[RMDB]
RNA sequence: GGGAACGACUCGAGUAGAGUCGAAAAGAUAUGGAAUUGUAGAUGCCAACAGCUCACGUCGGAAACGACGUGAGACAUGGCAAUUACUGAUUCCUAAGUCAAACAAUAGCUGUUCGCAGCUAUUGAACGACGUAUACUCCUUCGGGAGUAUACGUCGAAAAGAAACAACAACAACAAC
Reactivity to DMS in 0.01 (KOAc 150mM, MgCl2 10mM, bicine 150mM(pH8.5), 24C), signal-to-noise 2, nucleotides 027 to 126: g020a030u000a300u000g000g000a000a000u000u000g010u010a000g010a130u000g010c000c000a060a140c190a160g000c010u000c010a000c010g000u000c010g030g000a080a090a170c010g000a010c000g020u000g030a010g000a020c010a150u010g020g040c000a030a070u000u000a010c000u020g010a010u000u000c010c010u000a070a160g010u000c030a160a140a240c020a010a000u000a010g000c000u000g010u000u010c300g020c000a050g020c000u000a000u010u010g000a140a120
Reactivity to 2A3 in 0.01 (KOAc 150mM, MgCl2 10mM, bicine 150mM(pH8.5), 24C), signal-to-noise 2, nucleotides 027 to 126: g020a010u070a040u190g010g010a000a000u070u000g030u060a020g050a230u110g000c030c060a220a040c070a190g000c010u000c000a000c000g000u000c000g000g050a040a070a050c000g000a010c000g010u000g020a000g000a000c000a050u080g020g000c000a000a040u070u030a020c040u090g030a080u000u000c000c000u030a090a010g070u040c050a030a110a140c000a000a100u000a000g000c000u040g100u140u100c300g000c190a000g000c010u010a000u000u000g010a070a000